[RMDB]
RNA sequence: GGGAACGACUCGAGUAGAGUCGAAAACGACAGCACCGCCCCGCCCGUCGUCACCAGCGGAAUCGCCCACGGACGCGCGAAACCGGUGGACCCGCGGUGGCCGCCCUCCCCAACGGGAGUGGGAAUCCCCGAACGGUGAGUUCGCUCACCGUUCGGGAAAAGAAACAACAACAACAAC
Reactivity to 2A3 in 0.01 (KOAc 150mM, MgCl2 10mM, bicine 150mM(pH8.5), 24C), signal-to-noise 2, nucleotides 027 to 126: c010g030a040c020a000g040c020a080c010c040g040c010c000c010c010g010c010c000c000g050u060c000g000u090c000a000c000c000a020g000c010g000g030a060a070u070c060g090c090c060c000a070c070g080g120a070c110g090c000g020c010g100a040a020a050c030c000g050g040u020g060g000a050c000c000c010g050c000g020g000u060g010g020c000c020g020c000c010c000u020c000c000c000c000a070a060c130g000g020g020a040g020u190g000g010g070a000a050u060c000
Conditions: 150 mM KOAc, 10 mM MgCl2 and 150 mM bicine (pH 8.5), 24 C. Chemical mapping of a 177-nucleotide RNA with 2A3. The 2A3 profile rests on 791 reads.